Source information: An RNA of 177 nucleotides, treated with DMS and 2A3 and read out base by base. Source: RMDB libraries RFM100 and RFMREP, as collected in RNAgym. The reactions ran in a buffer of 150 mM KOAc, 10 mM MgCl2 and 150 mM bicine (pH 8.5), at 24 C.
[RMDB]
RNA sequence: GGGAACGACUCGAGUAGAGUCGAAAACGCGACGCAGACCCCCGGCCGUGGAUGCUCGCUCGGGCUCGGGAUCCGCCCAGGUAGCGGCCGGACCCUGGUCCCGCGCCCAGGCCCUCCCCAGCCCCCCGAGUCUUUAGAAAUUCGUUUCUAAAGACUCAAAAGAAACAACAACAACAAC
Reactivity to DMS in 0.01 (KOAc 150mM, MgCl2 10mM, bicine 150mM(pH8.5), 24C), signal-to-noise 5, nucleotides 027 to 126: c090g010c020g000a040c100g010c050a070g020a180c060c010c040c030c030g010g020c070c030g010u000g000g000a140u010g010c040u000c050g010c040u000c050g000g000g010c010u000c090g000g000g010a080u010c020c040g000c090c000c020a130g000g020u010a110g020c100g000g020c130c050g010g010a050c070c020c020u000g020g000u000c010c010c030g030c160g010c020c010c030a120g010g010c020c030c040u000c010c000c010c030a190g010c010c020c000c010c030c120
Reactivity to 2A3 in 0.01 (KOAc 150mM, MgCl2 10mM, bicine 150mM(pH8.5), 24C), signal-to-noise 5, nucleotides 027 to 126: c030g020c020g020a020c050g000c050a020g030a230c000c000c000c000c000g020g000c010c020g050u060g040g030a050u090g020c020u030c040g020c030u050c040g010g000g000c010u020c020g000g010g020a070u030c020c020g000c010c010c000a040g100g060u090a040g050c080g070g000c060c010g010g000a010c020c010c000u030g000g010u040c000c010c000g000c000g000c000c000c000a000g000g000c000c010c000u010c000c010c000c000a010g010c000c000c000c000c000c010